[RMDB]
RNA sequence: GGGAACGACUCGAGUAGAGUCGAAAAAGCAGCACUAUACGUAGUGCUGCAAUACUUGUAUAAGUAUGUCCCAUGCAAUAUCUGGGACAUACUUAUACUAACAACGUCCACCAUACGUGGUGGACGACCACAUUAUAUCGUUCGCGAUAUAAUGUGGAAAAGAAACAACAACAACAAC
Reactivity to DMS in 0.01 (KOAc 150mM, MgCl2 10mM, bicine 150mM(pH8.5), 24C), signal-to-noise 7, nucleotides 027 to 126: a090g010c000a010g000c000a000c000u000a040u010a100c230g020u010a000g020u000g000c000u000g020c000a020a020u010a050c120u010u000g020u000a000u000a010a010g000u000a010u000g010u000c000c000c000a010u010g020c200a250a100u020a110u010c200u000g010g000g010a010c000a000u000a000c000u000u000a010u000a000c000u010a060a060c210a090a150c010g010u000c000c000a010c000c000a050u010a080c180g030u010g010g010u000g000g010a000c000g010a040
Reactivity to 2A3 in 0.01 (KOAc 150mM, MgCl2 10mM, bicine 150mM(pH8.5), 24C), signal-to-noise 9, nucleotides 027 to 126: a000g010c010a000g000c000a000c010u010a010u050a060c280g160u030a010g000u000g000c000u000g000c000a000a000u020a010c020u030u060g000u000a000u000a000a000g000u000a000u010g000u000c010c000c000a010u060g010c030a070a150u060a080u300c100u020g000g000g000a000c000a000u000a000c000u000u000a000u000a000c000u000a030a010c030a020a030c010g000u000c000c000a000c000c000a020u040a080c290g110u030g000g000u000g000g000a000c000g000a010
Chemical mapping of a 177-nucleotide RNA with DMS and 2A3.
The reactions ran in a buffer of 150 mM KOAc, 10 mM MgCl2 and 150 mM bicine (pH 8.5), at 24 C.
It was measured as part of the RMDB libraries RFM100 and RFMREP.
DMS adducts were read by reverse transcription with MarathonRT.